The record gives the reactivity of an RNA of 207 nucleotides to 2A3 and DMS. Conditions: 150 mM KOAc, 10 mM MgCl2 and 150 mM bicine (pH 8.5), 24 C. The DMS profile rests on 12,735 reads. For 2A3 the reverse transcriptase was SuperScript II with manganese. It was measured as part of the RMDB library M2RFPK.
RNA sequence: GGGAACGACUCGAGUAGAGUCGAAAAGGAGCGACAAGUAUUUAGCUUGAGAUAGCUAAAUCACCUCGGUAUGAUUAGGGUGAGACCUAGGAACCGUCGGGGUAUUCUCAAAGGAAGCUUUUGCAGUGAAGGAAGAUACGAUUCGUCGUAUCUUCAACCAUAGAAUAGAGUUCGCUCUAUUCUAUGGAAAAGAAACAACAACAACAAC
Reactivity to 2A3 in 0.01 (KOAc 150mM, MgCl2 10mM, bicine 150mM(pH8.5), 24C), signal-to-noise 8, nucleotides 027 to 156: g070g010a060g020c050g090a070c040a050a010g040u100a070u010u000u000a000g000c010u020u030g010a020g010a080u170a030g000c000u000a010a010a010u010c010a010c010c000u030c020g010g020u090a050u100g060a070u040u060a010g010g010g010u050g110a100g020a070c000c000u010a010g020g030a030a050c020c010g030u020c010g000g010g000g000u020a070u150u070c080u020c030a060a070a010g100g010a040a040g000c010u040u060u140u180g060c090a060g030u050g170a120a040g100g000a000a000g010a000u000a000c000g000a000u020u080c180g060u010c000g000u090a000u000c000u000u000c000a000a000
Reactivity to DMS in 0.01 (KOAc 150mM, MgCl2 10mM, bicine 150mM(pH8.5), 24C), signal-to-noise 4, nucleotides 027 to 156: g010g000a070g020c050g010a060c050a040a030g010u000a020u000u000u010a010g010c000u000u000g020a300g000a100u000a020g000c000u000a000a020a020u000c020a040c010c010u000c000g020g000u000a090u000g010a230u000u000a040g010g020g010u010g010a300g000a190c020c010u000a060g000g010a160a070c100c070g020u000c000g010g000g010g010u000a050u010u010c040u000c060a060a080a100g010g000a110a170g020c040u000u010u000u000g010c050a130g010u010g010a150a170g010g010a030a010g010a010u000a020c000g020a060u000u000c300g030u000c000g030u000a010u000c000u010u000c010a040a110